Structure probing data (DMS and 2A3) for a 207-nucleotide construct. The 2A3 profile rests on 2,330 reads. The reactions ran in a buffer of 150 mM KOAc, 10 mM MgCl2 and 150 mM bicine (pH 8.5), at 24 C.

RNA sequence: GGGAACGACUCGAGUAGAGUCGAAAAGAAAGCAUGCGCAUGCGAAAGGAUGGUGACUAUCUUGAAUUAGUUGGAUGGGAAAGCAUGCUAACGUCUCUGCCGUACGGAAACCAUCCUCAGGACGCGCUCUGUUGAUGAACUGCACGGAUGGGAAAGCGUUCUCACAAAGUUUCGACUUUGUGAGAACAAAAGAAACAACAACAACAAC
Reactivity to DMS in 0.01 (KOAc 150mM, MgCl2 10mM, bicine 150mM(pH8.5), 24C), signal-to-noise 2, nucleotides 027 to 156: g000a140a110a090g000c040a090u030g010c000g040c080a080u000g000c020g010a200a110a080g020g000a040u000g020g020u000g010a120c040u000a060u000c060u000u000g000a120a220u000u000a110g030u000u000g040g020a120u000g000g010g000a070a100a120g010c010a020u000g020c030u000a110a100c090g010u020c020u000c020u000g000c050c030g060u000a110c080g000g030a070a110a090c040c000a040u000c000c010u000c000a130g010g020a080c070g000c050g040c050u000c070u030g000u000u010g010a140u000g010a000a130c040u020g000c040a090c070g020g010a100u050g020g030g000a050a050a130g030c140
Reactivity to 2A3 in 0.01 (KOAc 150mM, MgCl2 10mM, bicine 150mM(pH8.5), 24C), signal-to-noise 3, nucleotides 027 to 156: g130a020a070a010g030c040a030u040g030c070g020c030a030u090g050c040g100a130a020a050g060g020a020u030g010g070u070g010a030c020u030a070u100c020u090u210g080a210a180u170u070a070g060u040u140g040g020a060u000g020g000g000a090a040a000g010c010a000u020g010c000u010a060a020c030g070u020c030u030c040u120g070c030c030g030u090a040c020g050g000a070a080a020c020c000a000u010c000c000u010c010a000g040g010a050c060g070c010g010c080u050c070u120g150u170u060g040a110u040g020a050a040c020u040g000c100a020c130g000g000a000u000g000g000g060a050a000a040g100c090